[RMDB]
RNA sequence: GGGAACGACUCGAGUAGAGUCGAAAAUAAACAAAACAAAUUUAAAGGAGAAAGGUGCAGCAGACAGCCUCGAAAAAUGCACCUAGAAACGAGGCUUAAAGCACCAGAGGAAAACUCUGGUGCAAAAGGACAUCGUCCAGUUCGCUGGAUGAUGUCCAAAAGAAACAACAACAACAAC
Reactivity to DMS in 0.01 (KOAc 150mM, MgCl2 10mM, bicine 150mM(pH8.5), 24C), signal-to-noise 2, nucleotides 027 to 126: u030a070a040a130c060a060a050a130a060c050a060a050a060u020u020u060a060a040a120g000g000a200g000a060a120a070g000g000u000g050c000a030g010c110a070g020a100c130a060g010c040c010u010c010g020a010a020a040a120a090u000g010c040a080c060c030u000a020g000a050a050a090c020g050a010g000g000c000u050u030a060a130a080g000c020a000c030c000a000g000a010g000g000a100a040a160a180c000u000c000u000g000g000u000g010c010a000a020a100a030
Reactivity to 2A3 in 0.01 (KOAc 150mM, MgCl2 10mM, bicine 150mM(pH8.5), 24C), signal-to-noise 1, nucleotides 027 to 126: u020a020a010a010c090a020a060a030a000c030a050a100a040u000u050u150a090a080a060g030g030a060g040a010a080a000g000g000u010g000c000a060g010c020a000g010a100c030a000g000c000c000u000c000g070a040a010a000a000a100u080g010c010a020c010c000u020a050g120a000a010a000c020g000a020g050g000c020u000u130a110a040a000g000c000a000c000c000a000g000a000g000g010a020a030a030a030c000u000c000u000g000g020u000g000c000a000a000a000a000
An RNA of 177 nucleotides, treated with DMS and 2A3 and read out base by base. Values are in units of 0.01, from 0 to 300, in steps of 10. The data come from the RNA Mapping Database (RMDB), library OK1LIB. The reactions ran in a buffer of 150 mM KOAc, 10 mM MgCl2 and 150 mM bicine (pH 8.5), at 24 C. For 2A3, 4,903 sequencing reads were counted.